[RMDB]
RNA sequence: GGGAACGACUCGAGUAGAGUCGAAAACGGAAGAGGGCGACUGUAUUGCGUAGCGAGAGGUGAAAGUUGACGACCUACGUAGGACAAACCGAAGCGAAAGCUGUCGUCCAGUACGUUUCCGGUGAUCACUCAUAAUAGUCUUCGGACUAUUAUGAGUAAAAGAAACAACAACAACAAC
Reactivity to DMS in 0.01 (KOAc 150mM, MgCl2 10mM, bicine 150mM(pH8.5), 24C), signal-to-noise 9, nucleotides 027 to 126: c020g000g010a080a100g010a120g010g020g010c010g010a030c020u000g020u000a060u010u000g010c020g010u010a030g000c030g010a090g010a100g010g010u000g010a090a100a220g000u000u000g000a060c120g010a110c300c020u000a020c010g020u000a030g010g010a030c010a030a060a110c230c190g010a090a060g000c000g000a060a070a120g000c010u000g010u000c010g010u000c000c010a070g010u010a060c080g000u000u000u000c010c010g010g010u010g000a100u010c110
Reactivity to 2A3 in 0.01 (KOAc 150mM, MgCl2 10mM, bicine 150mM(pH8.5), 24C), signal-to-noise 6, nucleotides 027 to 126: c010g000g040a060a000g060a110g040g020g000c010g010a000c020u030g020u050a060u050u050g000c010g000u000a010g000c040g020a030g000a020g030g050u080g080a080a060a040g110u060u050g070a120c010g010a020c000c010u020a020c010g000u010a030g030g010a010c020a030a100a020c080c060g070a040a000g010c010g010a050a010a010g010c010u010g010u010c000g000u000c000c000a000g010u020a020c040g020u020u010u020c010c010g020g030u080g040a070u150c050
Conditions: 150 mM KOAc, 10 mM MgCl2 and 150 mM bicine (pH 8.5), 24 C. The record gives the reactivity of an RNA of 177 nucleotides to DMS and 2A3. 2A3 adducts were read by reverse transcription with SuperScript II with manganese. The DMS profile rests on 16,417 reads. Source: RMDB library RFMREP, as collected in RNAgym.